[RMDB]
RNA sequence: GGGAACGACUCGAGUAGAGUCGAAAAACGGUGCGAAAGUUCGCGCUUCCGUGAAACGCGAAAAUCGGACGGUGGCUGCAAGUCGCAUCGCAAAACCGCGGCAAGUGGAGUUAGCGAGAGGAGGCUGAAACCAUCCAACACUUCGGUGUUGGAUGAAUCCUCGCUAUCUAUUCGUAGAUAGCGAGGAAAAAGAAACAACAACAACAAC
Reactivity to 2A3 in 0.01 (KOAc 150mM, MgCl2 10mM, bicine 150mM(pH8.5), 24C), signal-to-noise 3, nucleotides 027 to 156: a000c010g000g020u010g010c010g010a000a020a100g070u070u080c030g010c000g000c000u020u010c010c000g000u050g090a190a200a090c110g020c050g080a070a040a020a140u130c020g000g020a020c030g000g000u020g040g000c130u160g020c050a060a020g010u000c010g000c010a020u000c000g000c010a050a070a000a000c020c020g020c020g040g050c050a100a020g030u040g070g000a030g020u060u040a010g010c030g030a010g010a030g070g020a000g030g000c030u040g040a070a000a000c020c000a000u000c000c000a000a000c000a000c000u050u070c210g100g000u000g000u010u000g000g010a000u010g000a000a010
Reactivity to DMS in 0.01 (KOAc 150mM, MgCl2 10mM, bicine 150mM(pH8.5), 24C), signal-to-noise 1, nucleotides 027 to 156: a060c010g000g030u000g010c000g000a020a080a140g020u000u000c060g030c020g030c020u000u020c020c060g020u010g000a060a030a040c010g010c020g000a090a030a060a070u010c020g010g020a080c010g050g030u000g010g010c010u010g020c030a060a090g030u000c020g000c000a120u000c030g000c010a070a050a100a040c010c020g030c070g010g000c040a060a130g000u000g000g010a070g030u000u000a070g040c050g020a120g000a060g020g030a030g010g020c040u000g010a120a060a170c100c000a030u000c000c020a010a040c000a010c000u010u010c280g050g000u010g000u010u000g020g010a010u000g000a030a050
Structure probing data (2A3 and DMS) for a 207-nucleotide construct. The data come from the RNA Mapping Database (RMDB), library M2RFPK. For 2A3 the reverse transcriptase was SuperScript II with manganese.